An RNA of 207 nucleotides, treated with 2A3 and read out base by base. It was measured as part of the RMDB library M2RFOK. The reactions ran in a buffer of 150 mM KOAc, 10 mM MgCl2 and 150 mM bicine (pH 8.5), at 24 C.

RNA sequence: GGGAACGACUCGAGUAGAGUCGAAAAACAUGCUGGCCAACCUAACCCCACGAUCCUCCAUCGGCAUGAUCAUGAUGUGUUCUCAAAUAUCAGGCCAGUAAAUCACCAUGCUCGUGCUGGUAAAGGCAACUUAUGCCCAAGUUCGCUUGGGCAUAAAAGGAUACCUCGUAUUCGUACGAGGUAUCCUAAAAGAAACAACAACAACAAC
Reactivity to 2A3 in 0.01 (KOAc 150mM, MgCl2 10mM, bicine 150mM(pH8.5), 24C), signal-to-noise 2, nucleotides 027 to 156: a000c110a050u140g000c000u030g040g030c000c000a020a000c110c060u140a050a070c030c020c040c020a080c140g040a150u130c010c020u070c050c000a040u020c000g010g000c010a000u030g000a010u030c000a020u020g010a080u080g010u000g020u110u020c040u050c070a130a140a010u200a100u080c060a080g000g030c000c000a000g000u010a000a010a050u070c010a020c020c000a000u050g000c010u000c000g000u010g060c000u000g000g010u050a190a110a000g090g000c020a020a090c090u030u020a010u010g000c020c000c000a000a030g000u020u040c080g010c090u000u020g040g000g000c000a000u000a000a000a000